[RMDB]
RNA sequence: GGGAACGACUCGAGUAGAGUCGAAAAGCGAAAGUUGCAAUGAGACCGUAACUUUCGUAGUCAUUGAUAAAGGGGCAGGUCUCGCUCUUUUGUCAUUGCGGUUGCCUAGAGGCAUGGUCGUUUACCGAAAAGAGCUCAUUCUUCGGAAUGAGCUCAACAACUAGGAAACGUUCGCGUUUCCUAGUUGAAAAGAAACAACAACAACAAC
Reactivity to 2A3 in 0.01 (KOAc 150mM, MgCl2 10mM, bicine 150mM(pH8.5), 24C), signal-to-noise 4, nucleotides 027 to 156: g020c010g010a000a000a000g010u010u020g000c020a020a050u110g040a100g050a230c050c030g020u010a000a000c000u000u010u010c010g000u000a020g030u040c020a010u000u030g000a010u020a000a020a020g020g000g010g000c040a020g090g150u100c050u070c130g010c000u010c010u000u000u000u000g010u010c010a010u020u040g020c020g060g020u070u070g020c000c020u130a140g030a150g070g020c030a030u060g030g000u000c010g000u030u010u040a300c030c020g030a060a050a050a070g010a010g000c000u000c000a010u010u000c000u020u060c150g020g000a000a000u000g000a000g020c000u000c000a000a010
Reactivity to DMS in 0.01 (KOAc 150mM, MgCl2 10mM, bicine 150mM(pH8.5), 24C), signal-to-noise 1, nucleotides 027 to 156: g020c010g010a020a010a020g020u000u000g000c040a070a080u000g000a110g000a060c070c080g000u000a040a020c010u000u010u010c000g020u000a040g010u000c090a100u000u010g020a020u000a020a040a020g010g000g000g020c000a130g010g000u000c070u010c070g010c010u000c020u020u000u000u000g010u000c000a010u000u020g000c090g020g020u000u000g000c000c040u010a120g000a210g010g010c050a100u000g000g000u020c030g020u000u010u000a110c000c040g020a120a090a070a180g000a020g000c000u010c000a000u000u000c000u010u000c300g050g000a030a000u000g010a040g020c000u000c000a010a070

This 207-nucleotide RNA was probed chemically with 2A3 and DMS. For 2A3 the reverse transcriptase was SuperScript II with manganese. The RNA was probed in 150 mM KOAc, 10 mM MgCl2 and 150 mM bicine (pH 8.5) at 24 C. Reactivities are given for positions 27 through 156. The data come from the RNA Mapping Database (RMDB), library M2RFPK.